Structure probing data (2A3 and DMS) for a 177-nucleotide construct.
It was measured as part of the RMDB library OK2TRN.
The DMS profile rests on 3,062 reads.
[RMDB]
RNA sequence: GGGAACGACUCGAGUAGAGUCGAAAAGAGGAUAAAAAAAGGUCAUUAGCCUGGUUAAGAUUGCAUACACUGCCUUGGUGCUUAUUGUUUGGGACAAAGGAGAGACCUUUAGAAGUACAUUGAAGGCGAAAUAAGCCUGUUUCGACAGGCUUAUUUCAAAAGAAACAACAACAACAAC
Reactivity to 2A3 in 0.01 (KOAc 150mM, MgCl2 10mM, bicine 150mM(pH8.5), 24C), signal-to-noise 1, nucleotides 027 to 126: g000a040g070g030a130u160a130a000a000a010a000a010a030g030g000u020c030a110u050u120a070g020c000c020u020g000g050u030u070a060a000g060a170u060u250g030c020a010u030a140c020a010c040u080g000c000c030u030u070g070g000u070g020c010u060u030a050u110u140g130u080u140u120g000g020g000a020c070a040a160a000g080g010a060g000a000g010a000c000c040u000u020u000a030g010a070a010g050u040a000c000a050u070u100g030a070a020g100g020c070
Reactivity to DMS in 0.01 (KOAc 150mM, MgCl2 10mM, bicine 150mM(pH8.5), 24C), signal-to-noise 3, nucleotides 027 to 126: g010a070g010g010a070u010a000a010a070a060a030a060a040g010g010u010c040a110u010u000a100g020c010c010u010g000g000u000u000a080a060g000a090u000u010g020c040a050u010a070c100a080c090u000g010c070c060u000u000g020g010u010g000c030u000u010a060u010u010g000u000u000u000g020g000g010a100c060a010a050a050g020g010a130g000a110g000a070c020c010u000u000u010a080g010a060a080g000u010a030c110a060u010u000g010a030a060g010g020c150